Description: An RNA of 177 nucleotides, treated with DMS and 2A3 and read out base by base. The data come from the RNA Mapping Database (RMDB), library OK1LIB. The reactions ran in a buffer of 150 mM KOAc, 10 mM MgCl2 and 150 mM bicine (pH 8.5), at 24 C. 2A3 adducts were read by reverse transcription with SuperScript II with manganese. Values are in units of 0.01, from 0 to 300, in steps of 10. Reactivities are given for positions 27 through 126.

RNA sequence: GGGAACGACUCGAGUAGAGUCGAAAAUAUUAUGCUACAAAGCGUGAAGGUGAACAUAUGAGUAGUGCGUAUGUUUCACCUGAAGACUUUUACGAAGUCAUGAGAUUGAUUGCUGUAGAAAUAUUAAUAACAGCACAACAUUCGUGUUGUGCUGUUAAAAAGAAACAACAACAACAAC
Reactivity to DMS in 0.01 (KOAc 150mM, MgCl2 10mM, bicine 150mM(pH8.5), 24C), signal-to-noise 3, nucleotides 027 to 126: u030a050u030u020a060u010g010c030u000a050c100a050a100a050g020c130g030u000g030a150a020g010g020u000g010a020a000c000a000u000a000u000g000a090g020u050a040g010u020g000c010g010u000a000u000g000u000u020u010c000a020c010c000u000g010a130a110g000a070c020u000u000u000u060a170c210g000a070a020g000u020c000a040u010g000a090g020a140u000u010g000a090u000u030g020c040u000g010u020a010g000a050a040a020u020a050u000u000a070a240
Reactivity to 2A3 in 0.01 (KOAc 150mM, MgCl2 10mM, bicine 150mM(pH8.5), 24C), signal-to-noise 3, nucleotides 027 to 126: u100a030u140u090a160u230g000c000u000a020c030a050a190a030g020c040g010u100g090a060a030g020g000u000g010a020a020c010a000u010a000u030g080a060g150u290a040g110u160g250c010g000u010a000u010g060u020u050u020c000a000c020c000u000g020a030a000g000a010c000u000u040u020u080a090c180g080a020a000g020u000c030a060u140g050a020g020a190u090u170g080a200u070u160g000c000u010g000u030a010g040a080a000a000u050a030u070u110a040a150